An RNA of 177 nucleotides, treated with 2A3 and read out base by base. The reactions ran in a buffer of 150 mM KOAc, 10 mM MgCl2 and 150 mM bicine (pH 8.5), at 24 C. It was measured as part of the RMDB library RFM100. As a SHAPE reagent, 2A3 marks flexible, mostly unpaired nucleotides at the ribose 2'-OH. 2A3 adducts were read by reverse transcription with SuperScript II with manganese.
RNA sequence: GGGAACGACUCGAGUAGAGUCGAAAAGCUAAGAGCGUGGAUGUUGUAGGUAACAUUAGACUAUGGGGGUGGGAACCCUUGUAGUUUUAUACCAUAUGAUUAUUCGCUGUUACACUGCGGCUUUCUCGGAUCGACUGUUCUUCGGAACAGUCGAUCCAAAAGAAACAACAACAACAAC
Reactivity to 2A3 in 0.01 (KOAc 150mM, MgCl2 10mM, bicine 150mM(pH8.5), 24C), signal-to-noise 1, nucleotides 027 to 126: g020c020u060a040a010g000a010g000c020g060u040g020g020a030u000g010u040u010g010u020a000g000g000u000a020a020c030a210u040u110a020g000a030c000u010a000u000g000g000g000g000g060u040g090g070g050a060a150c000c000c010u020u000g020u020a000g000u000u010u030u030a080u020a000c010c020a130u020a090u110g030a000u110u090a000u070u030c000g000c040u070g030u060u040a060c110a000c010u080g030c120g030g000c020u000u000u040c000u000c000